Structure probing data (2A3 and DMS) for a 207-nucleotide construct.
The reactions ran in a buffer of 150 mM KOAc, 10 mM MgCl2 and 150 mM bicine (pH 8.5), at 24 C.
The DMS profile rests on 2,009 reads.
2A3 adducts were read by reverse transcription with SuperScript II with manganese.
The data come from the RNA Mapping Database (RMDB), library M2RFOK.
RNA sequence: GGGAACGACUCGAGUAGAGUCGAAAAUCAGAAUCAGGCCGGAGUGUUUAGCGCUCCGUAAACACGGUCGUACAUCCAGCCGGUAGCCUGGUUCCUUGCAUUGGGUGAUGUACGGAGUUUAUAGAGCAAAAGAAAGACCUGUUCGCAGGUCUUUCAAGUUUCAUAUGCUGUUCGCAGCAUAUGAAACAAAAGAAACAACAACAACAAC
Reactivity to 2A3 in 0.01 (KOAc 150mM, MgCl2 10mM, bicine 150mM(pH8.5), 24C), signal-to-noise 3, nucleotides 027 to 156: u100c000a000g020a000a000u010c000a000g000g010c030c000g030g010a010g000u070g030u080u230u230a110g090c010g000c000u000c000c010g000u020a000a010a000c140a020c050g050g020u030c020g050u060a010c000a020u000c050c020a010g020c010c010g030g020u040a000g000c010c000u010g000g000u000u000c010c010u090u120g080c050a120u040u100g060g000g020u080g040a030u010g010u010a030c060g030g040a080g020u070u150u040a170u120a050g140a020g030c060a050a050a070a050g000a000a000a000g000a000c000c000u000g000u030u040c140g000c060a000g000g000u000c000u000u000u000c000a010a000
Reactivity to DMS in 0.01 (KOAc 150mM, MgCl2 10mM, bicine 150mM(pH8.5), 24C), signal-to-noise 1, nucleotides 027 to 156: u000c110a070g000a090a010u010c000a000g000g040c010c050g020g000a120g030u000g020u000u000u010a250g010c120g000c000u010c000c010g000u000a020a040a100c090a170c120g040g020u010c020g050u000a090c010a030u000c020c100a230g040c000c050g010g040u000a110g020c030c000u000g000g020u000u000c000c020u000u000g020c120a120u010u000g020g080g050u030g010a040u000g010u010a070c030g000g000a130g000u000u000u000a040u030a100g020a030g020c020a090a040a150a190g010a040a010a020g000a030c010c010u010g020u010u000c210g000c020a020g040g010u000c010u000u000u010c000a040a110